[RMDB]
RNA sequence: GGGAACGACUCGAGUAGAGUCGAAAAGAAAGAAAGAAGCCGGAAAAUCGACCACUGAGAAUCUUGAGAGUGGUCUCUAGAUUCGUCUAUGAAGAUUUUGCACGAAAGUGCGAGAACGGCGAAGAAAGGGUUCAUUUAACUUCGGUUAAAUGAACCCAAAAGAAACAACAACAACAAC
Reactivity to 2A3 in 0.01 (KOAc 150mM, MgCl2 10mM, bicine 150mM(pH8.5), 24C), signal-to-noise 1, nucleotides 027 to 126: g000a000a030a000g040a010a100a070g070a120a060g020c030c000g020g050a000a150a000a000u010c000g000a080c080c060a010c080u020g030a040g000a080a020u000c000u000u000g000a000g000a000g030u300g300g190u050c010u000c000u000a000g000a000u000u000c030g130u010c190u010a040u080g000a000a000g000a000u000u000u020u150g000c000a000c000g000a130a060a120g020u000g000c030g000a060g060a060a000c000g000g000c000g040a000a000g050a000a100a000
Reactivity to DMS in 0.01 (KOAc 150mM, MgCl2 10mM, bicine 150mM(pH8.5), 24C), signal-to-noise 2, nucleotides 027 to 126: g010a160a200a080g000a200a140a110g000a180a270g000c000c020g000g030a080a040a050a010u000c040g000a260c300c120a000c050u000g010a190g000a000a000u010c010u000u000g000a000g000a090g010u070g000g020u020c040u000c000u000a020g000a000u000u000c000g010u000c010u000a130u000g000a090a300g000a010u000u000u000u040g000c010a090c000g000a060a040a100g000u000g010c050g000a100g000a070a190c000g010g000c000g020a030a090g010a080a060a050

An RNA of 177 nucleotides, treated with 2A3 and DMS and read out base by base. The 2A3 profile rests on 501 reads. The RNA was probed in 150 mM KOAc, 10 mM MgCl2 and 150 mM bicine (pH 8.5) at 24 C. DMS adducts were read by reverse transcription with MarathonRT.